[RMDB]
RNA sequence: GGGAACGACUCGAGUAGAGUCGAAAAAUCUUGCAAGAAGAGUACCACUUAAACCCAGAGACCAGAACCAUUCUCUUUGUGAAAACCAGAGCCCUUGUGGAUGCUUUAAAGAAAUGGAUUAAAGAAAGAGGGGUAGUUGAUUCGUCAACUACCCCUCAAAAGAAACAACAACAACAAC
Reactivity to 2A3 in 0.01 (KOAc 150mM, MgCl2 10mM, bicine 150mM(pH8.5), 24C), signal-to-noise 1, nucleotides 027 to 126: a000u000c020u010u060g070c040a200a010g080a080a000g010a130g070u060a030c010c010a090c030u090u050a070a060a060c020c000c000a010g000a020g000a010c020c010a060g000a130a010c000c000a000u050u000c020u010c000u060u000u000g040u090g060a040a010a000a000c040c000a060g000a000g000c000c000c000u150u070g000u140g130g000a130u210g020c060u110u080u020a020a090a030g050a000a030a030u250g010g000a030u040u140a020a130a000g040a200a070a020

Chemical mapping of a 177-nucleotide RNA with 2A3. Source: RMDB library OK1LIB, as collected in RNAgym. Conditions: 150 mM KOAc, 10 mM MgCl2 and 150 mM bicine (pH 8.5), 24 C. Reactivities are given for positions 27 through 126. For 2A3, 474 sequencing reads were counted.